Conditions: 150 mM KOAc, 10 mM MgCl2 and 150 mM bicine (pH 8.5), 24 C. Structure probing data (2A3) for a 207-nucleotide construct.
RNA sequence: GGGAACGACUCGAGUAGAGUCGAAAACAGAUAAGAAAAGACCGAGAGGUUCAAGCUUAUAGGGCAGUAAGCGGGGGACAGCAGUACUAAACAUUCCCUGUGGCUGAGACGAAGGUAGUACUCCAACAAAACGAGUACUAGUUCGCUAGUACUCGAAGAAAUUCGAAGAGUUCGCUCUUCGAAUUUCAAAAGAAACAACAACAACAAC
Reactivity to 2A3 in 0.01 (KOAc 150mM, MgCl2 10mM, bicine 150mM(pH8.5), 24C), signal-to-noise 2, nucleotides 027 to 156: c010a010g100a130u170a200a020g020a010a130a020a000g030a010c000c080g060a010g000a030g090g000u100u090c040a060a010g000c000u010u010a010u070a140g030g040g000c000a030g010u030a050a020g000c040g020g000g000g020g010a000c000a000g020c010a010g020u050a030c030u080a040a110a010c040a050u070u030c000c020c000u050g040u060g030g000c040u020g000a010g020a010c060g040a030a020g040g000u010a010g010u000a090c010u050c050c020a050a030c060a040a210a020a030c040g000a000g000u000a000c000u000a000g000u000u040c070g020c100u000a000g010u000a000c000u000c000g010a050a000